[RMDB]
RNA sequence: GGGAACGACUCGAGUAGAGUCGAAAAUCCUAAGUCCUCCUCGUACGAGGCGAAAGGGAGCUACUCGGAAACGAGUAGCGAAGAACUUUCGAACUACCUUUGAAAGGAGGAUAUGGAAAAAGCCUUUCUGUUAGGUUUCGACCUAACAGAAAGGCAACAACGGAAGUAGGUUCGCCUACUUCCGUUGAAAAGAAACAACAACAACAAC
Reactivity to DMS in 0.01 (KOAc 150mM, MgCl2 10mM, bicine 150mM(pH8.5), 24C), signal-to-noise 1, nucleotides 027 to 156: u010c000c030u000a030a220g000u000c000c010u010c000c000u000c000g010u000a300c300g030a020g000g020c040g010a000a070a000g000g000g000a300g020c020u000a000c030u020c020g000g000a140a090a290c010g000a000g000u000a010g000c000g000a010a100g000a150a210c000u000u000u040c020g020a130a150c020u030a180c010c010u020u000u000g020a260a040a090g020g030a020g010g020a030u020a110u000g000g030a070a160a080a100a070g040c000c010u000u000u000c040u000g000u000u000a030g000g000u000u000u000c300g000a060c000c010u000a000a000c000a010g010a000a000a000g020g020c040a060a010
Reactivity to 2A3 in 0.01 (KOAc 150mM, MgCl2 10mM, bicine 150mM(pH8.5), 24C), signal-to-noise 2, nucleotides 027 to 156: u000c000c000u030a130a020g030u000c000c000u010c000c020u030c010g030u110a090c040g010a000g000g000c000g010a000a020a000g010g030g040a020g020c000u000a000c000u000c000g020g030a050a110a080c000g010a010g000u010a000g000c000g010a040a000g000a010a000c000u000u010u000c000g020a060a030c120u160a100c160c000u020u090u140g090a110a060a000g000g000a000g010g000a010u030a050u070g010g040a040a090a000a100a000g000c010c000u010u020u000c000u000g000u010u010a020g040g050u020u060u180c210g100a050c000c000u000a000a000c000a000g000a000a000a000g010g000c000a000a000

An RNA of 207 nucleotides, treated with DMS and 2A3 and read out base by base. 2A3 adducts were read by reverse transcription with SuperScript II with manganese. The 2A3 profile rests on 1,806 reads. DMS adducts were read by reverse transcription with MarathonRT. For DMS, 1,566 sequencing reads were counted. Values cover nucleotides 27 to 156.